[RMDB]
RNA sequence: GGGAACGACUCGAGUAGAGUCGAAAAGCUGAAUCGUGAGAUUCAGCAGCGACGCUUCGGCGUCGCACAAUGAAUCUUCGGAUUCAUUGAACAUCGACGUUCGCGUCGAUGAGGACAUCGUGAGAUGUCCAAGCGGUUCUCGUGAGAGAACCGCAGCGUGGCGUUCGCGCCACGCACCGGCAUCUACGGAUGCCGGACCGCUUAGCGUGAGCUAAGCGGAAACACUACAUGCAGCGCUCUAGGUGUGUAGUGACAGUAAGCGCGCUAAUGAACCGUUCGCGGUUCAUAAAAGAAACAACAACAACAAC
Reactivity to 2A3 in 0.01 (KOAc 150mM, MgCl2 10mM, bicine 150mM(pH8.5), 24C), signal-to-noise 5, nucleotides 027 to 266: g000c000u000g010a000a000u000c010g030u070g130a130g000a030u010u000c000a000g000c000a000g000c000g000a000c000g010c000u060u060c230g120g010c010g000u000c000g000c000a000c000a000a000u000g000a000a000u010c010u050u110c300g160g000a000u000u000c000a000u000u010g030a050a030c000a000u000c000g000a000c000g030u070u110c270g030c000g110u010c000g000a000u010g040a100g010g000a000c000a010u010c010g050u060g140a130g000a030u000g000u000c000c000a010a040g000c000g000g000u020u010c000u010c000g030u110g040a140g000a000g000a030a000c000c000g000c000a000g000c000g000u000g010g000c020g030u050u080c260g040c000g000c100c000a000c000g000c000a000c000c000g000g000c000a000u000c000u020a040c230g120g000a000u000g000c000c000g000g000a010c000c000g000c000u000u000a000g000c000g030u040g030a010g000c000u000a000a000g000c000g000g000a000a010a000c000a000c000u010a000c000a000u020g020c010a010g010c030g010c030u050c080u240a110g100g020u020g000u000g000u010a000g010u010g110a040c030a040g180u200a070a020g050c020g010c010g040c120u150a090
Reactivity to DMS in 0.01 (KOAc 150mM, MgCl2 10mM, bicine 150mM(pH8.5), 24C), signal-to-noise 2, nucleotides 027 to 266: g010c020u000g000a010a000u000c000g000u050g020a190g000a000u000u000c010a010g010c020a050g010c010g020a010c010g040c020u000u010c160g000g020c010g020u000c000g010c000a050c020a020a020u000g000a010a000u000c000u000u020c200g020g000a010u000u010c000a000u010u010g010a280a300c010a000u000c000g000a020c000g030u020u010c230g010c020g010u000c000g000a000u000g000a100g010g000a010c010a000u000c010g000u030g000a230g000a010u000g010u000c000c010a090a060g000c000g000g000u000u000c000u000c010g010u040g010a250g020a020g010a010a010c000c000g030c000a010g010c000g050u000g000g020c000g020u000u020c180g010c000g030c000c000a000c000g010c000a000c000c010g000g010c000a000u000c000u000a080c160g020g000a010u000g000c000c000g000g000a010c010c010g010c010u010u000a000g010c000g010u020g000a070g000c000u000a010a010g000c000g000g000a030a090a260c010a010c000u020a000c020a000u000g020c010a150g000c020g000c020u000c050u010a080g020g010u000g000u000g000u000a020g010u020g000a080c300a110g010u020a100a020g050c070g010c000g000c200u000a110